[RMDB]
RNA sequence: GGGAACGACUCGAGUAGAGUCGAAAACUCACUAACUUCGGUUAGUGAGAAAUAAAUUCAGCGGUUUAAAUUUCGACGGCAUAACCGCUGAUGCCCUCGAAAAAAGCAUUCCCUUCGGGGAAUGCAAUCCUCUAAAAUAGUUCGCUAUUUUAGAGGAAAAAGAAACAACAACAACAAC
Reactivity to 2A3 in 0.01 (KOAc 150mM, MgCl2 10mM, bicine 150mM(pH8.5), 24C), signal-to-noise 2, nucleotides 027 to 126: c000u000c000a000c000u000a010a000c000u040u030c130g040g000u010u000a000g000u000g000a030g000a000a020a000u020a000a030a010u030u000c000a000g000c000g010g060u030u050u140a080a120a180u200u300u190c110g060a080c010g040g040c050a020u100a090a020c000c000g020c000u000g000a000u000g000c010c030c000u050c040g130a100a070a020a020a060a040g030c020a030u000u000c010c010c000u000u040c250g030g000g000g000a000a000u000g000c000a000a010
Reactivity to DMS in 0.01 (KOAc 150mM, MgCl2 10mM, bicine 150mM(pH8.5), 24C), signal-to-noise 3, nucleotides 027 to 126: c000u000c000a020c000u000a020a000c000u000u010c160g010g000u000u000a010g000u000g010a020g010a000a050a040u010a050a080a040u010u000c000a010g020c000g000g000u000u000u000a080a140a160u000u010u010c110g020a100c110g000g030c120a080u010a020a020c000c000g010c000u020g000a000u000g000c000c000c000u000c170g000a000a040a070a080a120a140g000c000a010u000u000c010c000c000u000u020c200g020g000g020g010a000a000u000g000c010a030a020